[RMDB]
RNA sequence: GGGAACGACUCGAGUAGAGUCGAAAAGAUAUGGAGUGGUGAGGGAGGAAUUUGGUCGGAAACGACCAGAUUCCAUCGAUCUCACGUAACAUCUCCUAAGUCAAACUGCACGCUUCGGCGUGCAGAAGAACUGGUCUAAGUUCGCUUAGACCAGUUCAAAAGAAACAACAACAACAAC
Reactivity to DMS in 0.01 (KOAc 150mM, MgCl2 10mM, bicine 150mM(pH8.5), 24C), signal-to-noise 3, nucleotides 027 to 126: g000a000u000a030u010g020g010a030g030u000g010g000u000g000a020g000g000g000a000g010g020a010a010u000u000u000g010g010u000c000g020g000a010a000a020c010g010a010c000c000a000g000a000u000u000c000c000a180u010c190g010a030u020c000u010c000a000c000g020u010a090a200c270a110u010c000u000c000c010u010a000a100g000u000c000a090a120a210c000u000g020c000a010c000g010c000u000u020c230g020g010c000g030u000g010c000a020g000a060a090
Reactivity to 2A3 in 0.01 (KOAc 150mM, MgCl2 10mM, bicine 150mM(pH8.5), 24C), signal-to-noise 2, nucleotides 027 to 126: g000a000u000a010u040g000g010a000g030u130g030g000u010g070a000g000g010g000a010g000g000a000a000u000u000u000g000g000u000c000g000g000a000a000a000c000g000a000c000c000a010g000a000u000u000c000c000a040u270c000g000a010u000c010u000c000a000c000g030u060a100a030c040a130u110c010u000c010c010u000a000a010g000u000c020a060a070a090c020u010g000c010a000c000g020c010u060u150c300g210g000c000g010u000g000c000a000g000a010a020